Chemical mapping of a 177-nucleotide RNA with 2A3 and DMS.

[RMDB]
RNA sequence: GGGAACGACUCGAGUAGAGUCGAAAAGAAAAAGACAGUGAAACAAACAGUUAAGUUUGCUAGUUUUGUCGAUCAGCUCCUAGUUAACCUCGCGCACUUGCAAAAGCAGCUCAACCACUUGCAACCCCGAAUCUUCACAGUUCGCUGUGAAGAUUCGAAAAGAAACAACAACAACAAC
Reactivity to 2A3 in 0.01 (KOAc 150mM, MgCl2 10mM, bicine 150mM(pH8.5), 24C), signal-to-noise 1, nucleotides 027 to 126: g050a000a070a000a010a010g030a010c030a030g070u120g110a040a030a030c030a020a040a010c010a040g020u140u100a220a020g010u030u110u060g000c000u080a020g020u000u050u190u130g020u100c030g060a110u090c030a000g000c000u030c040c040u030a010g040u070u110a060a010c020c000u010c020g010c060g000c030a030c020u030u090g030c000a040a070a040a000g010c010a000g000c000u020c010a030a010c040c000a030c080u070u070g000c000a030a010c000c000c000
Reactivity to DMS in 0.01 (KOAc 150mM, MgCl2 10mM, bicine 150mM(pH8.5), 24C), signal-to-noise 2, nucleotides 027 to 126: g000a070a070a060a150a110g030a020c020a020g010u000g000a130a120a090c010a000a040a060c030a140g000u000u000a160a150g010u010u020u000g000c040u000a130g010u000u000u040u000g030u010c030g030a120u010c130a090g000c080u020c000c020u030a060g040u000u000a060a090c040c010u000c060g040c050g020c130a030c050u000u000g030c090a100a060a070a050g000c040a080g010c040u010c060a030a070c060c030a050c090u010u000g000c050a030a110c090c010c010

For DMS, 879 sequencing reads were counted. It was measured as part of the RMDB library OK2TST. The RNA was probed in 150 mM KOAc, 10 mM MgCl2 and 150 mM bicine (pH 8.5) at 24 C. Reactivities are given for positions 27 through 126.